The record gives the reactivity of an RNA of 177 nucleotides to 2A3 and DMS. The reactions ran in a buffer of 150 mM KOAc, 10 mM MgCl2 and 150 mM bicine (pH 8.5), at 24 C. For 2A3, 2,293 sequencing reads were counted.

RNA sequence: GGGAACGACUCGAGUAGAGUCGAAAAUCAGCUCCACAAUACUGCAUCUGAAAACGACAGGACAAGAGAACAGAGCAGGAGAUCUCAUAGCUGCAAUAUUAUCUUUUGGGUGCUCCAUAUCAGCUCACUAUGCUUGAAUCUUCGGAUUCAAGCAUAGAAAAGAAACAACAACAACAAC
Reactivity to 2A3 in 0.01 (KOAc 150mM, MgCl2 10mM, bicine 150mM(pH8.5), 24C), signal-to-noise 3, nucleotides 027 to 126: u040c000a030g000c020u000c010c000a040c060a090a080u100a130c010u040g010c020a250u000c010u060g070a030a080a020a080c110g100a050c050a070g130g010a050c050a100a070g020a010g020a150a020c050a030g040a010g010c020a010g070g060a040g020a050u010c060u000c040a050u090a070g040c030u080g070c050a040a050u060a100u300u150a100u130c040u030u110u080u090g060g000g000u020g000c000u000c020c000a000u020a040u090c010a000g030c000u010c020a040
Reactivity to DMS in 0.01 (KOAc 150mM, MgCl2 10mM, bicine 150mM(pH8.5), 24C), signal-to-noise 3, nucleotides 027 to 126: u010c060a060g000c040u000c060c040a100c160a090a060u010a080c070u000g020c020a090u000c030u030g010a080a060a080a130c100g010a090c110a050g000g000a070c130a060a080g010a080g010a060a110c100a070g020a070g000c010a020g000g000a060g010a060u000c050u010c050a110u000a070g010c060u000g010c180a050a080u010a060u000u010a130u000c020u000u000u000u000g000g010g000u000g000c040u000c020c010a010u000a020u000c030a050g000c020u000c080a160